Chemical mapping of a 177-nucleotide RNA with 2A3 and DMS. Reactivities are given for positions 27 through 126. 2A3 adducts were read by reverse transcription with SuperScript II with manganese. Source: RMDB library TTRDEL, as collected in RNAgym. Conditions: 150 mM KOAc, 10 mM MgCl2 and 150 mM bicine (pH 8.5), 24 C.
[RMDB]
RNA sequence: GGGAACGACUCGAGUAGAGUCGAAAAGAUAUGGAUCAUGUCGAGCCUGCAUGUGUCGGAAACGACACAUGGGCUAAGACAGCAUGAGUCCUAAGUCAAAAUCGAAUUGCGUUCGCGCAAUUCGAAACGGGAUAAAGAUCUUCGGAUCUUUAUCCCGAAAAGAAACAACAACAACAAC
Reactivity to 2A3 in 0.01 (KOAc 150mM, MgCl2 10mM, bicine 150mM(pH8.5), 24C), signal-to-noise 1, nucleotides 027 to 126: g010a020u020a010u080g000g010a020u010c010a010u050g050u070c030g000a020g010c010c040u070g010c040a000u000g000u010g030u010c010g000g030a040a030a010c010g000a000c000a010c000a000u010g010g000g000c010u070a170a000g010a000c000a000g010c030a010u030g000a040g300u110c000c000u020a000a030g020u000c020a030a000a050a300u070c000g000a000a000u010u020g000c010g050u040u050c280g040c020g010c180a010a020u000u000c000g020a000a000a010
Reactivity to DMS in 0.01 (KOAc 150mM, MgCl2 10mM, bicine 150mM(pH8.5), 24C), signal-to-noise 2, nucleotides 027 to 126: g010a030u000a110u020g000g000a050u000c000a000u000g010u000c000g030a010g050c010c010u000g000c050a000u000g000u000g010u000c000g000g000a020a020a050c010g010a020c000a000c010a020u010g040g020g010c020u000a270a080g010a020c300a090g000c000a000u020g000a070g010u030c000c000u000a020a090g000u000c030a100a050a070a140u000c000g000a020a010u000u010g010c000g020u010u000c300g010c000g020c010a000a030u000u000c000g020a000a060a050